[RMDB]
RNA sequence: GGGAACGACUCGAGUAGAGUCGAAAAGCUCGGCCUUUCGAGGCCGAGCAGACGCCGUUUGCCUAGGCUAUAGGCUAAAUUAAAACACAAGCUGAAACACUACUGCUGAACAUUUCGAUGUUCAGAAUUUAAUGGAAAUGUUCGCAUUUCCAUUAAAAAAAGAAACAACAACAACAAC
Reactivity to DMS in 0.01 (KOAc 150mM, MgCl2 10mM, bicine 150mM(pH8.5), 24C), signal-to-noise 5, nucleotides 027 to 126: g010c010u000c010g010g010c000c000u000u000u010c150g010a030g010g030c010c000g000a010g030c000a020g010a110c130g020c010c010g010u000u000u000g000c010c000u000a030g010g010c040u020a100u000a020g000g000c000u000a030a080a110u020u010a070a060a100a080c100a070c100a070a080g000c060u000g000a100a080a090c110a080c090u010a060c140u000g010c000u000g000a010a010c000a020u000u000u010c130g010a020u000g000u000u000c000a010g000a070a060
Reactivity to 2A3 in 0.01 (KOAc 150mM, MgCl2 10mM, bicine 150mM(pH8.5), 24C), signal-to-noise 4, nucleotides 027 to 126: g010c020u010c010g020g040c020c040u090u100u120c180g080a020g000g000c030c000g010a000g010c010a010g000a020c060g040c010c000g000u020u050u040g000c000c000u010a010g030g040c110u110a070u020a100g010g010c000u010a030a010a100u140u130a030a040a070a010c090a010c050a090a030g040c070u090g110a060a130a000c040a020c080u230a040c040u120g070c010u000g000a000a000c010a010u060u110u170c210g080a010u010g000u000u000c000a000g000a010a030